[RMDB]
RNA sequence: GGGAACGACUCGAGUAGAGUCGAAAACCGCAUGCCCAGGUGGCCGCGAUCUUCAAGGCUACGGCGGGGAUAGGUCCGCGCUGAUCGUUUUCCUCCAACGACGCUAUGGCGUCUUUCCUUCACCCGCAAAAUCGUCUCCCGUUCGCGGGAGACGAAACAAAAAUAGUAGCUUCGGCUACUAUUUUUGAAAAGAAACAACAACAACAAC
Reactivity to 2A3 in 0.01 (KOAc 150mM, MgCl2 10mM, bicine 150mM(pH8.5), 24C), signal-to-noise 2, nucleotides 027 to 156: c040c010g010c100a070u180g030c010c010c010a030g050g040u020g010g000c020c020g010c030g110a090u100c050u250u140c130a050a070g020g010c010u030a040c030g050g000c010g000g010g000g000a050u130a100g040g010u020c020c010g030c000g000c060u080g070a150u040c020g000u010u050u060u070c030c030u120c060c030a070a020c050g000a000c010g010c080u110a080u230g040g010c000g020u030c050u040u060u020c010c000u010u010c040a090c050c000c000g000c020a040a030a000a060u020c000g000u010c000u010c000c010c000g010u010u020c230g010c020g080g000g000a000g010a000c000g000a000a000a000
Reactivity to DMS in 0.01 (KOAc 150mM, MgCl2 10mM, bicine 150mM(pH8.5), 24C), signal-to-noise 1, nucleotides 027 to 156: c020c010g060c020a100u010g010c010c000c030a240g020g000u000g040g000c040c080g000c040g000a040u000c040u010u000c050a100a100g010g000c000u000a030c050g000g040c040g040g000g000g020a110u000a070g020g000u000c060c050g010c050g090c050u010g020a030u000c060g030u000u000u010u000c030c020u020c100c030a080a120c010g010a050c010g020c050u000a100u010g040g020c050g010u000c040u000u000u010c010c010u020u000c060a200c030c000c080g000c050a070a050a080a140u000c000g000u000c010u000c020c000c000g040u000u000c260g020c040g010g010g010a020g000a010c000g000a000a040a150